Conditions: 150 mM KOAc, 10 mM MgCl2 and 150 mM bicine (pH 8.5), 24 C. This 207-nucleotide RNA was probed chemically with DMS and 2A3. DMS adducts were read by reverse transcription with MarathonRT. For DMS, 5,672 sequencing reads were counted.
[RMDB]
RNA sequence: GGGAACGACUCGAGUAGAGUCGAAAAGUGGCACAUGCCUGUGGUCCCAGCUACUUGGGAGGCUGAGAUGGGUGGAUCGUUUGAGCCUGGGAAGCUGAGGCUACAGUGAACUGUGAUUGCACCACAGCACUCCAGCCUGGGUGACAGAGCAAGACCAAGUAUUUAAUGGAUUCGUCCAUUAAAUACUAAAAGAAACAACAACAACAAC
Reactivity to DMS in 0.01 (KOAc 150mM, MgCl2 10mM, bicine 150mM(pH8.5), 24C), signal-to-noise 2, nucleotides 027 to 156: g020u000g020g020c010a110c080a150u010g010c040c020u000g020u000g020g020u000c010c000c000a020g000c020u000a010c050u000u000g040g020g020a130g020g010c020u000g010a050g010a080u000g000g030g050u000g010g010a100u010c030g010u000u000u000g020a180g020c000c000u000g000g030g010a130a190g020c000u010g000a060g010g020c010u000a060c070a050g010u010g030a040a060c050u010g010u000g000a120u010u010g030c050a300c020c010a090c040a050g010c010a070c010u000c030c030a040g030c050c010u000g000g020g010u000g010a120c040a090g000a140g030c020a080a080g010a140c030c000a130
Reactivity to 2A3 in 0.01 (KOAc 150mM, MgCl2 10mM, bicine 150mM(pH8.5), 24C), signal-to-noise 5, nucleotides 027 to 156: g060u050g030g020c060a050c020a120u130g030c010c010u030g000u020g020g100u060c010c010c000a000g000c020u110a070c020u080u080g090g030g010a040g030g000c000u010g040a050g020a190u120g060g020g060u060g030g030a050u050c040g030u020u150u160g060a010g000c000c010u030g000g030g040a100a020g040c060u070g070a020g060g000c010u060a040c030a030g040u080g120a100a050c030u040g030u040g090a050u060u180g070c020a010c030c000a020c020a010g010c010a060c030u020c010c020a010g010c010c020u000g010g010g010u060g020a020c020a010g040a000g030c010a020a000g010a020c030c000a020